[RMDB]
RNA sequence: GGGAACGACUCGAGUAGAGUCGAAAAAGGCAGAUUCAUUUCAGCUAAAUUGCGUAUGGUAAUGUCAUCUUGCAAACCUUGGUCUUUUCGAUAUUCAAGCAUGACAUCAAUUAGGCGAUUGGUUUGACGAUACCUCCGGGUUCGCCCGGAGGUAUCGAAAAGAAACAACAACAACAAC
Reactivity to DMS in 0.01 (KOAc 150mM, MgCl2 10mM, bicine 150mM(pH8.5), 24C), signal-to-noise 1, nucleotides 027 to 126: a100g010g010c000a100g020a120u000u010c130a080u010u000u010c050a040g000c050u010a050a030a030u000u000g000c060g030u000a030u000g010g020u000a030a000u010g020u000c000a000u030c020u000u000g030c300a040a070a130c120c080u020u000g000g010u010c050u020u000u000u010c050g000a030u000a120u000u020c040a000a060g020c140a040u000g000a000c070a000u000c020a040a110u010u030a030g010g020c000g000a020u000u000g020g010u000u010u000g000a100
Reactivity to 2A3 in 0.01 (KOAc 150mM, MgCl2 10mM, bicine 150mM(pH8.5), 24C), signal-to-noise 1, nucleotides 027 to 126: a000g050g040c000a000g030a070u060u080c020a060u100u100u100c040a020g000c030u110a080a060a160u210u120g000c020g070u070a050u130g000g100u180a150a040u040g040u000c000a060u000c050u020u020g050c090a020a030a060c000c040u040u090g060g000u050c060u020u170u030u100c000g010a020u010a050u100u070c000a050a020g020c010a090u060g070a010c010a050u000c000a040a130u060u020a050g040g110c000g050a110u020u050g040g000u050u050u020g020a050
Conditions: 150 mM KOAc, 10 mM MgCl2 and 150 mM bicine (pH 8.5), 24 C. The record gives the reactivity of an RNA of 177 nucleotides to DMS and 2A3. For 2A3, 896 sequencing reads were counted. For DMS, 932 sequencing reads were counted.